[RMDB]
Chemical mapping of a 177-nucleotide RNA with 2A3 and DMS. The RNA was probed in 150 mM KOAc, 10 mM MgCl2 and 150 mM bicine (pH 8.5) at 24 C. High 2A3 reactivity points to a flexible backbone, as in loops and unpaired stretches. The DMS profile rests on 2,415 reads. The 2A3 profile rests on 2,607 reads.
RNA sequence: GGGAACGACUCGAGUAGAGUCGAAAAUACCACCGCAAUCGCCGCCUGAGUCAUUCGCUCGCGCAGGCAUUCCGGCAGGUGAUUCGAACCGAUCAUCCGGCUUUCGUCUUCCAGCACCCACAGGCGCCCUUUACGACUUUUUCGAAAGUCGUAAAGGAAAAGAAACAACAACAACAAC
Reactivity to 2A3 in 0.01 (KOAc 150mM, MgCl2 10mM, bicine 150mM(pH8.5), 24C), signal-to-noise 2, nucleotides 027 to 126: u030a000c000c010a020c000c040g000c030a010a050u030c030g010c030c000g020c000c020u040g000a020g040u110c040a230u170u180c100g000c040u040c030g030c010g000c030a070g010g000c010a000u070u000c010c020g020g000c020a110g000g040u020g000a040u100u010c010g070a060a040c000c010g010a040u040c030a060u030c060c000g020g000c030u090u090u080c060g020u030c000u100u030c020c000a020g000c030a060c020c020c010a050c010a040g120g000c040g030c070
Reactivity to DMS in 0.01 (KOAc 150mM, MgCl2 10mM, bicine 150mM(pH8.5), 24C), signal-to-noise 3, nucleotides 027 to 126: u010a130c000c000a140c060c030g000c170a070a040u000c090g010c040c020g010c040c030u000g000a050g010u010c090a150u010u020c170g010c030u000c070g030c180g020c070a070g010g020c030a080u000u000c100c010g000g010c120a050g020g000u000g000a050u000u000c030g010a070a070c090c040g010a080u000c060a080u000c060c040g000g020c080u000u010u020c060g020u000c030u000u010c010c030a070g020c050a110c010c020c040a080c130a120g000g000c050g030c130